[RMDB]
Conditions: 150 mM KOAc, 10 mM MgCl2 and 150 mM bicine (pH 8.5), 24 C.
Chemical mapping of a 177-nucleotide RNA with 2A3 and DMS.
The 2A3 profile rests on 1,143 reads.
For DMS, 1,234 sequencing reads were counted.
For DMS the reverse transcriptase was MarathonRT.

RNA sequence: GGGAACGACUCGAGUAGAGUCGAAAACAAUAGCUUGGAAACUAAAGAGGUCUUGAGGGACCGUCGCAGACCGAUGUACGAAAGGCACAGGCUUACCAGGCAUGCGAGGAAUAUGGCUGCUGAGCUCGUAAGUUUUCACUUUCGAGUGAAAACUUACAAAAGAAACAACAACAACAAC
Reactivity to 2A3 in 0.01 (KOAc 150mM, MgCl2 10mM, bicine 150mM(pH8.5), 24C), signal-to-noise 1, nucleotides 027 to 126: c020a030a180u060a140g020c000u070u060g010g020a120a090a030c020u110a090a260a000g090a120g060g010u010c030u100u170g070a090g050g030g000a030c030c010g030u020c000g000c000a030g000a070c020c020g020a030u050g020u120a080c090g130a150a000a010g000g000c050a020c010a040g050g000c000u000u000a020c000c000a000g040g000c010a000u110g060c010g000a050g060g010a100a010u190a040u140g030g010c000u010g060c060u040g010a000g030c000u020c060
Reactivity to DMS in 0.01 (KOAc 150mM, MgCl2 10mM, bicine 150mM(pH8.5), 24C), signal-to-noise 2, nucleotides 027 to 126: c040a100a170u000a050g010c020u030u010g010g010a200a070a070c070u020a070a150a130g010a120g020g010u020c020u000u030g010a170g000g000g000a060c040c010g010u000c040g020c060a050g010a090c080c050g020a080u010g000u000a030c130g000a080a060a080g010g010c060a020c080a070g000g000c060u000u000a120c080c060a140g000g000c100a030u010g000c060g000a010g020g000a070a140u000a090u000g000g010c060u000g010c070u000g000a080g000c070u020c220